[RMDB]
RNA sequence: GGGAACGACUCGAGUAGAGUCGAAAAAACGAAAGGACGGGCAACUGUGGUAACGGCAAUUGCGGACGAGCUGCCCGAGCUGCUGGCAGCGUUGGAGAGUUCCACGGCCGAGUAUGCGACCAAGCCAACUAAUAUCGAGGUUCGCCUCGAUAUUAGUAAAAGAAACAACAACAACAAC
Reactivity to 2A3 in 0.01 (KOAc 150mM, MgCl2 10mM, bicine 150mM(pH8.5), 24C), signal-to-noise 3, nucleotides 027 to 126: a000a010c070g060a040a030a010g080g000a050c060g050g000g050c010a100a020c100u090g020u090g180g010u090a100a000c000g110g000c040a050a240u090u150g050c050g020g020a010c020g000a040g000c010u000g000c000c000c000g000a050g030c070u120g010c010u010g040g000c020a050g050c040g050u050u070g020g010a150g010a060g120u180u020c000c020a020c010g010g000c020c020g000a020g030u060a030u120g040c000g000a030c010c030a010a030g040c030c010a020
Reactivity to DMS in 0.01 (KOAc 150mM, MgCl2 10mM, bicine 150mM(pH8.5), 24C), signal-to-noise 4, nucleotides 027 to 126: a070a080c090g010a080a090a080g000g010a140c070g000g010g010c030a080a070c060u000g020u000g030g000u010a040a090c100g010g010c040a090a070u000u010g040c030g020g000a050c040g010a060g010c010u000g000c000c010c040g010a110g030c090u000g000c090u000g000g000c000a040g010c010g030u000u010g000g000a070g000a220g010u010u000c020c020a080c060g000g010c020c000g010a070g010u000a040u010g000c050g000a140c040c050a070a110g010c080c080a100
Chemical mapping of a 177-nucleotide RNA with 2A3 and DMS. The DMS profile rests on 5,138 reads. DMS (dimethyl sulfate) methylates the pairing face of unpaired adenines and cytosines. 2A3 adducts were read by reverse transcription with SuperScript II with manganese. DMS adducts were read by reverse transcription with MarathonRT.